[RMDB]
RNA sequence: GGGAACGACUCGAGUAGAGUCGAAAACAAGUCAGGACCCUUUGAGGAGAAGGUUAUCCAAGUCCGCUAUGAUCCCUGUAGGCAAGUUUGGGAUGUGGGAUGAUGAUGGAAUGGUCUGAAUAACUCCCAUUGAGUCUGGAUUCGUCCAGACUCAAUGAAAAGAAACAACAACAACAAC
Reactivity to DMS in 0.01 (KOAc 150mM, MgCl2 10mM, bicine 150mM(pH8.5), 24C), signal-to-noise 7, nucleotides 027 to 126: c150a080a110g010u000c050a070g010g010a110c140c010c030u000u000u010g000a150g010g000a200g010a050a040g000g010u010u010a100u010c030c040a070a140g000u000c020c050g000c040u000a050u000g000a060u000c020c010c020u000g010u000a080g000g010c090a050a090g020u000u010u010g010g010g010a070u000g010u010g000g010g000a050u000g000a050u000g010a070u000g010g010a050a050u000g010g000u000c040u000g000a060a060u020a090a120c130u000c020c020
Reactivity to 2A3 in 0.01 (KOAc 150mM, MgCl2 10mM, bicine 150mM(pH8.5), 24C), signal-to-noise 4, nucleotides 027 to 126: c030a030a050g120u100c050a030g030g060a070c000c020c000u010u030u060g130a110g080g040a060g010a030a060g040g000u080u100a030u060c010c000a020a030g040u000c020c010g000c050u080a060u190g080a030u020c000c010c000u060g090u090a090g090g060c100a090a070g050u090u200u100g060g000g000a040u050g050u080g080g010g000a040u060g030a040u010g020a020u050g040g050a050a050u070g040g030u020c010u020g030a010a030u080a050a040c020u010c000c000
An RNA of 177 nucleotides, treated with DMS and 2A3 and read out base by base. DMS (dimethyl sulfate) methylates the pairing face of unpaired adenines and cytosines. Values are in units of 0.01, from 0 to 300, in steps of 10. It was measured as part of the RMDB library OK2TRN. The RNA was probed in 150 mM KOAc, 10 mM MgCl2 and 150 mM bicine (pH 8.5) at 24 C.